[RMDB]
RNA sequence: GGGAACGACUCGAGUAGAGUCGAAAAAAACCACCCGCACAACCCGACCAUCGUCGACUGGGCGGCGAGGAACGAGAGCAUCGAGAAUACGGAUAUCGUGUGUUAUAUCCAGUUUGGACUGACGCAUUUCCCUCGCACGGAGGACUUUCCGAUCAUGGAUUGUGCCCAAUUUCGAUUGGGCACAAUCAAAAGAAACAACAACAACAAC
Reactivity to 2A3 in 0.01 (KOAc 150mM, MgCl2 10mM, bicine 150mM(pH8.5), 24C), signal-to-noise 1, nucleotides 027 to 156: a000a000a000c010c000a000c040c000c000g000c000a010c000a070a030c000c110c000g030a000c060c030a220u060c020g000u010c020g010a070c030u040g000g030g000c030g000g030c020g000a010g030g010a040a010c040g020a010g020a010g090c030a050u070c100g020a020g090a110a020u130a090c030g000g030a060u040a030u070c110g030u040g050u040g030u150u090a020u000a010u120c000c040a060g000u050u100u220g020g010a080c060u020g020a000c000g000c030a060u020u010u050c000c000c000u000c030g050c000a040c050g040g000a040g010g050a010c030u030u080u100c060c000g120a070u120c160a120u140g110